[RMDB]
RNA sequence: GGGAACGACUCGAGUAGAGUCGAAAAAGGGUUGAGAUGACCCACAGUCGGGUGAUCCACCAGGAGGGUGGAGGAGAGACCACCUCCAGAGGACCCCUUCAGCGAACAGAAGAGCUCCCUCCUCCGGAAGCCUUGGCCUUCGGGCCAAGGAAAAGAAACAACAACAACAAC
Reactivity to 2A3 in 0.01 (KOAc 150mM, MgCl2 10mM, bicine 150mM(pH8.5), 24C), signal-to-noise 3, nucleotides 027 to 129: a000g060g020g000u060u080g040a100g020a180u140g010a000c000c130c020a030c010a010g200u100c120g000g000g000u030g070a160u010c000c010a040c010c030a000g050g020a040g030g040g020u050g000g000a000g040g050a080g040a030g060a030c000c020a010c010c000u000c000c000a000g020a050g030g040a070c000c000c010c010u010u050c040a030g030c000g040a040a010c030a050g060a120a020g020a070g010c020u030c000c000c000u030c000c000u020c000c000g010g000a000a040g010
Reactivity to DMS in 0.01 (KOAc 150mM, MgCl2 10mM, bicine 150mM(pH8.5), 24C), signal-to-noise 1, nucleotides 027 to 129: a100g060g040g010u050u030g060a100g050a090u070g020a040c000c030c030a100c230a130g000u020c080g010g000g000u020g010a090u000c000c000a080c000c160a200g030g020a060g050g010g080u000g010g020a030g050g000a100g000a150g030a000c000c000a000c020c040u020c000c000a110g040a080g060g020a080c160c000c000c030u000u000c030a100g020c020g050a050a120c000a000g000a080a070g020a110g100c140u020c060c030c040u020c020c000u000c000c050g000g060a030a050g000